Source: RMDB library OK3TST, as collected in RNAgym. Structure probing data (2A3) for a 207-nucleotide construct. Conditions: 150 mM KOAc, 10 mM MgCl2 and 150 mM bicine (pH 8.5), 24 C. Values cover nucleotides 27 to 156. For 2A3, 646 sequencing reads were counted.

RNA sequence: GGGAACGACUCGAGUAGAGUCGAAAAACUAGGUGACCUUGGGCAAGUCUCUUUCUCUCUGGGUGGUUCCACAGCUGUUAAACAGGUUUGGAAAUUAUUAUCUACAGGUAAAGCACCCAUAAUGGUGCCAGACACCUUGGUAGGUCCCCAAUAUAUAGUAUCCUUGAGUCUUCGGACUCAAGGAUACAAAAGAAACAACAACAACAAC
Reactivity to 2A3 in 0.01 (KOAc 150mM, MgCl2 10mM, bicine 150mM(pH8.5), 24C), signal-to-noise 1, nucleotides 027 to 156: a030c040u040a040g040g010u010g030a040c000c000u010u010g080g000g010c010a010a030g060u040c000u000c000u020u100u000c040u000c000u050c010u050g000g020g020u020g010g060u020u030c000c000a020c040a030g060c000u040g010u050u160a150a110a040c010a040g040g000u030u030u020g070g090a000a060a000u210u100a080u060u040a030u170c020u060a010c020a030g010g020u070a100a060a000g010c000a000c010c010c010a030u180a030a100u290g010g000u010g000c000c000a020g010a080c050a000c080c010u040u040g050g000u000a020g000g000u040c000c060c060c000a100a000u150a000u090a020u180a130